[RMDB]
RNA sequence: GGGAACGACUCGAGUAGAGUCGAAAAGGGAAGCCAGGCGAGGGCUGGGUGUGUGUGGAUGGAUGGAGGCGCCCACUCAUCCCCCAGGGAGCUCCCACCACCUUGGGGACUCAGAUGGGACAGGGGAUGGUGCACGCAGCACAGUGUGGUCCUACCACUAAAUGGAGUAGUUCGCUACUCCAUUUAGAAAAGAAACAACAACAACAAC
Reactivity to 2A3 in 0.01 (KOAc 150mM, MgCl2 10mM, bicine 150mM(pH8.5), 24C), signal-to-noise 1, nucleotides 027 to 156: g010g000g000a080a000g020c010c000a020g000g040c040g050a090g030g030g000c030u020g040g030g040u000g000u010g000u000g050u020g000g060a150u100g020g000a030u070g040g010a050g010g030c040g060c020c010c010a020c000u050c010a000u010c000c000c000c000c000a000g000g040g000a030g040c020u040c020c010c010a060c010c030a070c000c000u020u030g010g000g010g000a010c030u040c110a010g000a090u020g010g000g090a100c080a100g010g000g000g030a020u070g030g070u070g020c040a000c080g120c020a020g000c050a020c010a040g050u050g020u050g070g050u060c010c000u040a070c010c030a020